Notes: An RNA of 177 nucleotides, treated with DMS and 2A3 and read out base by base. High 2A3 reactivity points to a flexible backbone, as in loops and unpaired stretches.
[RMDB]
RNA sequence: GGGAACGACUCGAGUAGAGUCGAAAAUAGCAGCUCGGCUGUGCGAUGUCAAGCCGUCUGGUCUGACUUGCUGCGAUCCGCUGUGGAGUUGUCGUGGUGCUGCGUUCCGUGGUGGAACGUCUACGACCAUCCCGGUAGCGUUCGCGCUACCGGGAUGAAAAGAAACAACAACAACAAC
Reactivity to DMS in 0.01 (KOAc 150mM, MgCl2 10mM, bicine 150mM(pH8.5), 24C), signal-to-noise 2, nucleotides 027 to 126: u010a120g020c010a050g010c070u000c090g040g020c070u010g000u000g030c040g000a060u000g010u010c070a060a070g000c040c020g010u000c130u010g020g010u010c040u040g000a030c050u000u010g020c020u020g020c040g010a070u000c080c070g030c060u000g000u020g030g010a110g010u000u000g010u000c010g020u000g000g010u030g000c130u010g010c000g010u000u000c000c000g040u000g030g020u030g010g010a000a010c000g010u010c030u000a010c030g020a020c010
Reactivity to 2A3 in 0.01 (KOAc 150mM, MgCl2 10mM, bicine 150mM(pH8.5), 24C), signal-to-noise 1, nucleotides 027 to 126: u120a000g070c010a010g000c010u040c060g130g000c030u040g030u000g140c000g050a040u120g080u090c010a010a030g030c010c000g130u070c110u140g030g050u020c060u090g000a060c000u040u100g010c020u040g020c000g020a060u050c060c060g010c070u030g010u150g060g060a170g070u140u050g000u080c010g000u000g000g000u120g060c200u090g040c080g030u010u000c000c020g040u110g170g150u270g020g040a000a000c000g000u000c020u000a020c020g030a000c020
The reactions ran in a buffer of 150 mM KOAc, 10 mM MgCl2 and 150 mM bicine (pH 8.5), at 24 C. Reactivities are given for positions 27 through 126.